[RMDB]
Overview: Conditions: 150 mM KOAc, 10 mM MgCl2 and 150 mM bicine (pH 8.5), 24 C. An RNA of 177 nucleotides, treated with DMS and 2A3 and read out base by base. The 2A3 profile rests on 17,491 reads. It was measured as part of the RMDB library OK1LIB.

RNA sequence: GGGAACGACUCGAGUAGAGUCGAAAAUGUGCUCACUAGGAGGAUUAAAGUGGUUACACGGUUCAUUCAGACCCCUCGGAACCGUUAUUUUAUCAGCAGUGGGUUUCACAAGUAGCCGCUCAGCGUGCCUGAGUAAUAGUUUCGACUAUUACUCAGGAAAAGAAACAACAACAACAAC
Reactivity to DMS in 0.01 (KOAc 150mM, MgCl2 10mM, bicine 150mM(pH8.5), 24C), signal-to-noise 7, nucleotides 027 to 126: u010g020u010g010c000u000c000a040c020u000a090g020g010a100g000g000a040u020u030a030a080a040g030u000g000g020u030u030a090c200a040c060g010g000u000u000c010a090u040u040c140a110g000a170c060c010c010c040u010c190g020g000a020a030c010c010g000u000u010a020u010u010u020u020a070u020c060a070g000c070a040g010u000g010g000g010u010u030u020c040a040c080a050a080g010u000a080g010c000c020g000c010u010c060a060g020c070g010u030g000
Reactivity to 2A3 in 0.01 (KOAc 150mM, MgCl2 10mM, bicine 150mM(pH8.5), 24C), signal-to-noise 9, nucleotides 027 to 126: u100g020u040g010c000u010c010a030c020u030a060g090g070a030g030g020a050u080u170a080a040a040g100u080g130g070u140u090a030c040a000c040g000g020u020u020c020a050u140u050c020a030g060a210c000c000c000c040u070c010g050g010a010a000c000c000g010u010u020a020u000u060u010u040a060u020c040a010g130c010a010g020u030g020g060g000u020u220u190c060a050c010a030a060g010u030a010g030c000c000g010c020u030c050a030g020c020g090u100g030